RNA sequence: GGGAACGACUCGAGUAGAGUCGAAAAUAUGUGAUGCGACCGGUCUGUCGCAACGUCGUGCCUGCAGGCUCACAGGUUUAUCUCUGUCGACCUGCCGCUAUGAGGCUCAGCGCCCGGCUGCAGAUGCUCUCUGUACCUCAUUCGUGAGGUACAGAGAAAAAGAAACAACAACAACAAC
Reactivity to DMS in 0.01 (KOAc 150mM, MgCl2 10mM, bicine 150mM(pH8.5), 24C), signal-to-noise 3, nucleotides 027 to 126: u020a090u010g020u010g000a180u000g000c030g010a020c020c060g020g010u010c060u000g000u000c120g010c030a030a050c110g020u000c050g040u000g010c140c060u010g010c030a030g000g000c140u010c020a030c030a010g010g000u000u010u020a110u020c200u000c020u000g010u000c060g030a030c000c010u000g010c010c300g010c040u000a020u010g000a120g000g000c020u000c050a110g000c100g030c140c010c010g000g020c000u000g010c030a030g000a160u000g010c090
Reactivity to 2A3 in 0.01 (KOAc 150mM, MgCl2 10mM, bicine 150mM(pH8.5), 24C), signal-to-noise 2, nucleotides 027 to 126: u280a060u130g100u060g070a040u060g010c040g040a060c020c000g030g100u060c080u120g080u150c020g000c030a000a020c040g050u040c010g010u020g040c030c040u030g020c020a010g000g000c070u000c040a020c000a020g040g020u010u150u130a090u040c110u030c000u010g060u070c080g020a040c000c010u010g000c000c020g000c020u040a040u130g050a060g020g000c010u020c070a020g020c000g060c060c000c040g050g000c040u040g000c000a000g060a130u100g040c010